[RMDB]
RNA sequence: GGGAACGACUCGAGUAGAGUCGAAAACUGUGAGGCUUCGGCCUCACAGAUAGGUUUCUUUUUAGUGAUUUUUCCAAACCCCUUUGUGCAAAAAUCAUUAAUCUCGCGUACGUUUCGACGUACGCAAUGCUGUAUUGCAAUUCGUUGCAAUACAGCAAAAAGAAACAACAACAACAAC
Reactivity to 2A3 in 0.01 (KOAc 150mM, MgCl2 10mM, bicine 150mM(pH8.5), 24C), signal-to-noise 1, nucleotides 027 to 126: c010u010g020u000g000a010g010g000c060u090u160c300g150g000c000c010u000c010a000c000a000g010a000u040a000g030g010u000u030u000c000u000u010u030u010u000a010g000u000g000a010u000u000u000u000u010c040c000a030a030a100c070c070c000c040u060u110u090g030u050g000c070a000a000a000a000a000u000c000a010u000u020a040a090u070c160u100c110g000c010g020u000a010c000g000u000u020u150c200g070a010c000g000u010a000c010g020c000a010a020
Reactivity to DMS in 0.01 (KOAc 150mM, MgCl2 10mM, bicine 150mM(pH8.5), 24C), signal-to-noise 2, nucleotides 027 to 126: c000u000g000u010g000a020g020g010c010u000u020c200g040g020c000c000u000c000a000c000a030g000a070u000a110g000g000u000u010u010c010u000u000u010u000u000a010g000u000g000a000u000u000u000u000u000c000c000a010a020a030c020c030c050c060u000u010u000g010u000g010c170a020a030a020a020a010u000c000a010u000u000a160a110u010c120u000c170g010c000g000u000a000c000g000u010u010u020c120g030a030c010g010u010a000c010g020c000a020a010
An RNA of 177 nucleotides, treated with 2A3 and DMS and read out base by base. DMS adducts were read by reverse transcription with MarathonRT. Conditions: 150 mM KOAc, 10 mM MgCl2 and 150 mM bicine (pH 8.5), 24 C.